[RMDB]
RNA sequence: GGGAACGACUCGAGUAGAGUCGAAAAGGCAGUCGGUUUGGCGUUUUUGUUCGUAGCGAUGAUGCUUUUCAUCUGACGCGACGUGAAGACCAAACGCAGUUAAGAACCGUAGAUGACACGAAUUUAAGGUUAUUUAUAUGUUCGCAUAUAAAUAACCAAAAGAAACAACAACAACAAC
Reactivity to 2A3 in 0.01 (KOAc 150mM, MgCl2 10mM, bicine 150mM(pH8.5), 24C), signal-to-noise 6, nucleotides 027 to 126: g070g050c040a030g050u080c020g030g030u010u020u030g060g000c020g000u010u000u010u060u130g080u060u040c020g000u010a010g020c020g020a010u030g000a010u040g110c080u240u070u060u070c000a020u000c010u040g070a050c030g000c000g000a010c010g060u120g110a100a040g040a060c030c000a000a000a000c010g000c010a020g010u120u130a140a040g020a040a010c010c020g010u030a060g020a180u110g030a020c020a010c160g050a120a140u110u120u130a170a040
Reactivity to DMS in 0.01 (KOAc 150mM, MgCl2 10mM, bicine 150mM(pH8.5), 24C), signal-to-noise 9, nucleotides 027 to 126: g010g010c060a100g020u010c030g010g010u000u000u000g010g010c030g000u000u000u000u000u010g010u010u000c010g010u000a080g010c300g010a110u000g010a010u000g010c300u010u000u000u000c010a000u000c000u000g010a240c100g010c010g010a020c030g020u010g010a080a100g010a070c110c160a020a020a020c010g010c030a150g010u010u000a070a100g010a050a050c020c010g010u000a080g010a100u000g000a080c100a100c110g010a130a140u010u010u010a100a200

An RNA of 177 nucleotides, treated with 2A3 and DMS and read out base by base. Values cover nucleotides 27 to 126. In probing experiments dimethyl sulfate is read out at A N1 and C N3, which are open when not base-paired. For 2A3 the reverse transcriptase was SuperScript II with manganese.